[RMDB]
RNA sequence: GGGAACGACUCGAGUAGAGUCGAAAAGCAACUUAGGAUUUUAGGCUCCCCGUGCGUGUCUCGAAACAUGCCGGGCCAAACCCACGGGGGCUGGCGGUCCCCGUGCGGUCAAAAUCAAACCGCUGGAAAAACAGUUCUAGCUUCGGCUAGAACUGAAGAUACCUAGCACGUUCGCGUGCUAGGUAUCAAAAGAAACAACAACAACAAC
Reactivity to 2A3 in 0.01 (KOAc 150mM, MgCl2 10mM, bicine 150mM(pH8.5), 24C), signal-to-noise 2, nucleotides 027 to 156: g030c040a020a150c090u110u120a070g090g080a180u140u080u040u190a060g000g000c010u120c030c010c020c020g060u120g020c010g010u020g000u000c160u090c300g120a110a140a000c000a000u000g000c020c000g030g000g020c000c010a060a030a000c010c010c000a000c000g000g000g000g000g000c000u000g020g010c020g030g000u000c020c000c000c000g020u000g000c070g000g010u020c010a030a030a010a130u080c020a080a110a050c010c000g000c050u060g050g000a070a100a010a010a010c000a000g000u000u000c010u000a010g010c000u040u020c210g030g000c000u000a000g000a000a000c000u010g000a000a000